[RMDB]
RNA sequence: GGGAACGACUCGAGUAGAGUCGAAAACGUCGUCGUCGACGAUUGCGGUCCGCUCCGGCCACCGUGCCGCCGCGAUAGCGAGCGGGGUGUAGAGGUUCGUACCGCCCCGGUACAGCUCGCGGACCAGGCUGCAUGAUUUAUUCGUAAAUCAUGCAGCAAAAGAAACAACAACAACAAC
Reactivity to 2A3 in 0.01 (KOAc 150mM, MgCl2 10mM, bicine 150mM(pH8.5), 24C), signal-to-noise 8, nucleotides 027 to 126: c030g010u020c000g020u050c040g110u100c090g020a020c020g020a030u020u260g080c080g000g020u000c000c010g010c030u040c030c010g070g020c020c010a090c030c030g140u200g110c010c010g000c010c010g060c030g090a160u180a110g020c020g020a040g040c010g000g020g000g000u050g010u050a130g030a070g110g000u120u190c120g020u090a020c010c010g040c000c000c020c010g000g020u080a060c020a030g010c020u040c050g000c010g010g000a010c000c000a010g090
Reactivity to DMS in 0.01 (KOAc 150mM, MgCl2 10mM, bicine 150mM(pH8.5), 24C), signal-to-noise 4, nucleotides 027 to 126: c110g000u000c010g020u010c060g020u030c110g000a000c000g010a080u020u020g040c170g010g010u000c010c000g000c020u010c080c040g020g000c110c010a030c030c050g020u030g020c000c000g010c010c020g010c020g010a140u050a080g010c030g000a120g020c000g010g000g000g020u010g010u010a060g000a120g010g010u030u020c150g000u010a030c040c010g000c020c020c030c090g000g000u010a040c030a130g000c020u000c030g010c000g000g000a060c000c000a110g010